[RMDB]
RNA sequence: GGGAACGACUCGAGUAGAGUCGAAAACCUGGCUCGAAAUCGUCGACGCAUCGACGACGGUCCUGCCAUGAGACCGUAACGAGGACGUGUCGCCUCGAAUGGCGUCGGGGAGCCGGCAGCUUACCCCAAAACGACCGCAGCUUCGGCUGCGGUCGAAGAGAUUAUAGUCCUUCGGGACUAUAAUCUCAAAAGAAACAACAACAACAAC
Reactivity to 2A3 in 0.01 (KOAc 150mM, MgCl2 10mM, bicine 150mM(pH8.5), 24C), signal-to-noise 2, nucleotides 027 to 156: c020c010u020g040g010c050u050c080g150a170a250a220u080c060g080u030c020g010a020c010g050c110a060u070c040g040a020c010g020a000c020g020g000u030c030c040u090g040c020c010a090u070g020a060g020a080c040c050g060u120a060a040c000g010a010g010g020a020c070g200u180g030u190c120g060c000c030u050c000g030a030a080u060g050g010c020g010u080c030g000g020g020g010a010g000c020c000g090g070c060a060g020c010u060u130a120c010c040c000c000a060a060a030a030c040g000a000c010c000g010c040a000g030c000u110u120c250g160g000c030u000g020c000g000g000u000c040g000a000a010